The record gives the reactivity of an RNA of 177 nucleotides to DMS and 2A3. The reactions ran in a buffer of 150 mM KOAc, 10 mM MgCl2 and 150 mM bicine (pH 8.5), at 24 C. It was measured as part of the RMDB library M2PK90. DMS adducts were read by reverse transcription with MarathonRT.

[RMDB]
RNA sequence: GGGAACGACUCGAGUAGAGUCGAAAAUACAAUAGCGUAGGGAACCAAGCUAAGAGGUUGGAAGUCCAACGGUAGAGGGCUUGGUUCGCAGCUGCUCUAGAAGAGGACCCACUCCCUACGCCGCAAAGACUCAGAAAAGAUUCGUCUUUUCUGAGUCAAAAGAAACAACAACAACAAC
Reactivity to DMS in 0.01 (KOAc 150mM, MgCl2 10mM, bicine 150mM(pH8.5), 24C), signal-to-noise 5, nucleotides 027 to 126: u010a090c110a100a110u020a070g010c010g010u000a030g010g010g020a040a240c010c010a010a030g010c020u010a090a110g010a110g010g010u000u010g010g010a200a140g010u000c010c000a020a110c160g000g010u010a050g000a080g020g010g000c000u000u000g010g010u000u000c090g010c090a040g010c050u000g010c010u000c020u010a060g010a060a100g000a280g000g000a040c020c060c050a140c230u010c020c000c010u000a010c020g020c000c100g020c230a060a110a080
Reactivity to 2A3 in 0.01 (KOAc 150mM, MgCl2 10mM, bicine 150mM(pH8.5), 24C), signal-to-noise 1, nucleotides 027 to 126: u190a020c060a020a150u080a120g000c000g020u010a010g000g010g000a000a040c010c010a020a000g050c020u120a180a050g110a100g200g080u030u020g030g030a160a060g070u060c010c010a040a010c020g040g050u080a040g030a060g050g080g000c010u040u060g040g000u070u030c020g000c000a010g010c010u130g060c010u020c010u060a130g040a260a010g020a080g020g010a020c020c020c010a030c050u020c010c000c000u000a000c000g010c030c010g030c020a080a120a020